[RMDB]
RNA sequence: GGGAACGACUCGAGUAGAGUCGAAAAAUGAGCCUCGUGCCGAGGAGAGGCCGGAGACGGAGAGGCAGGAGGUCCCGAGGAGUAUCCAAGCAAAGAAGGGGAAGGAUCUCGAGGAAGACAUCUCCCACAUGAACAUACAGUUCGCUGUAUGUUCAUGAAAAGAAACAACAACAACAAC
Reactivity to 2A3 in 0.01 (KOAc 150mM, MgCl2 10mM, bicine 150mM(pH8.5), 24C), signal-to-noise 3, nucleotides 027 to 126: a000u090g010a020g040c000c000u020c050g150u050g020c020c000g030a040g050g050a060g010a030g040g000c000c010g050g000a030g010a040c030g000g030a080g000a040g060g000c030a030g090g000a010g010g010u020c010c000c010g020a110g030g010a020g010u060a030u020c030c030a070a050g060c050a060a100a200g110a060a070g100g000g000g040a020a050g050g000a040u010c020u020c050g050a060g050g020a050a040g040a030c010a060u040c040u000c030c000c010a050
Reactivity to DMS in 0.01 (KOAc 150mM, MgCl2 10mM, bicine 150mM(pH8.5), 24C), signal-to-noise 3, nucleotides 027 to 126: a110u010g000a130g020c020c000u000c040g000u000g020c030c010g010a100g020g010a060g000a090g010g010c020c020g000g000a190g030a150c070g010g000a080g030a140g010g030c040a050g000g000a040g000g020u000c010c020c010g020a100g000g010a060g010u000a060u010c020c010a090a200g030c150a040a050a120g010a080a110g000g010g000g010a120a190g000g000a080u010c020u000c020g010a070g020g000a050a060g000a070c130a100u010c090u000c020c000c150a250